Structure probing data (DMS and 2A3) for a 177-nucleotide construct. Values cover nucleotides 27 to 126. The 2A3 profile rests on 11,847 reads. Conditions: 150 mM KOAc, 10 mM MgCl2 and 150 mM bicine (pH 8.5), 24 C. Source: RMDB library OK2TST, as collected in RNAgym. For DMS, 15,269 sequencing reads were counted.
RNA sequence: GGGAACGACUCGAGUAGAGUCGAAAACUGGAUGCCGGUCCAAUUUGCGCCACGGAAUUUUAAGGCGGGGCAGCCUUGCCGGCACAUUAUCCCGGAUGAGCCGGGCUGUCACGCGCUGAUGAAGGAAGAAAAUAGUAAAUUUCGAUUUACUAUUUUCAAAAGAAACAACAACAACAAC
Reactivity to DMS in 0.01 (KOAc 150mM, MgCl2 10mM, bicine 150mM(pH8.5), 24C), signal-to-noise 7, nucleotides 027 to 126: c080u000g010g010a080u000g010c040c040g000g010u000c050c030a060a110u000u000u010g010c080g010c030c040a080c080g000g010a110a060u000u010u010u010a110a170g010g010c000g010g000g010g000c010a010g000c050c160u000u000g020c150c030g010g000c010a050c010a010u000u000a080u000c010c000c010g010g000a030u000g010a090g020c020c020g010g000g010c010u000g010u000c010a040c030g010c000g020c030u000g000a110u010g010a110a090g000g010a130a160
Reactivity to 2A3 in 0.01 (KOAc 150mM, MgCl2 10mM, bicine 150mM(pH8.5), 24C), signal-to-noise 5, nucleotides 027 to 126: c020u020g050g020a040u040g040c040c020g030g020u010c030c000a030a030u050u060u170g040c030g000c010c020a040c040g060g060a110a080u050u120u100u180a190a030g030g000c000g000g000g010g000c000a000g000c000c000u030u090g100c060c000g020g040c020a000c000a010u030u070a050u100c020c010c000g000g010a040u030g010a010g010c000c000g000g010g000c000u010g000u010c000a010c040g100c010g000c050u030g010a050u150g060a050a040g090g000a050a180